RNA sequence: GGGAACGACUCGAGUAGAGUCGAAAAAGUCCAUCGCCUCGGUACGCCGAGGCGAUGGACAAAGUGUUUUUCUCUCCACUUAAAUCGAAGAGAACAGGCUAGGUGCGUUACGACGAACCUAGCCUGAUGUGCGGUAAUCACUUCGGUGAUUACCGAAACCAUAUACAAUAUUCGUAUUGUAUAUGGUAAAAGAAACAACAACAACAAC
Reactivity to 2A3 in 0.01 (KOAc 150mM, MgCl2 10mM, bicine 150mM(pH8.5), 24C), signal-to-noise 2, nucleotides 027 to 156: a000g000u010c000c000a000u020c000g000c000c000u010c010g010g010u060a060c300g060c030c000g000a000g000g000c010g000a000u000g010g000a000c000a000a000a000g000u000g000u020u020u000u050u030c000u000c000u010c010c000a010c010u150u260a020a020a040u110c030g040a140a000g000a010g000a010a020c000a010g010g000c000u000a010g000g000u030g060c010g030u020u050a100c280g020a000c010g000a110a010c000c010u000a000g000c010c000u010g000a010u000g010u070g040c000g000g000u000a000a000u010c000a010c000u030u040c220g070g000u000g000a000u000u000a000c000c000g000a010a000
Reactivity to DMS in 0.01 (KOAc 150mM, MgCl2 10mM, bicine 150mM(pH8.5), 24C), signal-to-noise 1, nucleotides 027 to 156: a130g000u000c010c000a020u020c000g030c000c030u010c030g030g050u000a090c300g030c020c010g000a000g070g020c000g000a000u000g000g030a000c000a000a000a050g000u000g000u000u000u000u000u000c000u010c010u010c010c010a060c090u000u020a070a110a100u010c100g000a050a020g040a020g010a030a120c000a000g010g020c000u000a000g000g020u000g000c000g010u000u010a120c280g010a150c000g000a020a000c000c000u000a010g050c000c000u000g000a000u010g000u020g030c010g030g000u040a010a010u010c000a020c000u000u020c300g050g020u010g010a000u000u000a000c010c000g020a010a050